About this RNA:
Structure probing data (2A3 and DMS) for a 207-nucleotide construct. For DMS the reverse transcriptase was MarathonRT. Reactivities are given for positions 27 through 156. Source: RMDB library RNAMAK, as collected in RNAgym. For 2A3, 4,215 sequencing reads were counted. 2A3 adducts were read by reverse transcription with SuperScript II with manganese.

RNA sequence: GGGAACGACUCGAGUAGAGUCGAAAAGGACGACUUCGGUCGUCCAAAAAAGGGGUCGUCGUUGAAACACUAGUUUCUAUGAAGCUGAAGCCUCCACGGUGGAGAAACGGUGUGGAGACGACGGAGGCACCCAAAAAUGCGUCCUUCGGGACGCAAACAACAAUGUUAGUUUCGACUAACAUUGUUGAAAAGAAACAACAACAACAAC
Reactivity to 2A3 in 0.01 (KOAc 150mM, MgCl2 10mM, bicine 150mM(pH8.5), 24C), signal-to-noise 4, nucleotides 027 to 156: g020g000a010c010g000a010c040u090u150c300g050g000u000c000g010u010c000c010a000a030a000a000a000a000g040g010g000g000u050c000g000u000c010g000u010u010g010a030a030a000c010a000c010u080a250g020u030u000u010c040u030a300u140g030a020a010g010c010u010g060a160a040g090c020c070u110c090c040a020c020g020g000u030g020g040a020g000a010a000a010c010g000g000u000g000u000g000g010a040g000a000c000g000a000c010g000g000a000g010g020c000a140c030c020c060a130a070a000a000a000u050g000c000g000u000c000c010u030u080c180g040g000g080a000c000g000c010a000a030a000
Reactivity to DMS in 0.01 (KOAc 150mM, MgCl2 10mM, bicine 150mM(pH8.5), 24C), signal-to-noise 3, nucleotides 027 to 156: g020g030a050c000g030a030c010u000u000c260g060g020u000c020g020u000c010c000a010a000a030a060a060a070g000g020g030g010u000c000g020u000c000g040u000u000g000a300a150a030c010a020c020u000a060g040u000u000u000c000u000a230u010g010a130a240g000c010u000g000a080a110g000c090c020u010c000c020a210c040g000g000u010g010g010a020g000a030a020a030c010g000g000u000g030u000g000g000a300g000a010c000g000a040c020g000g000a080g010g020c040a080c010c010c010a020a030a060a070a120u000g020c020g030u000c000c000u000u000c300g020g020g000a000c010g000c000a000a030a140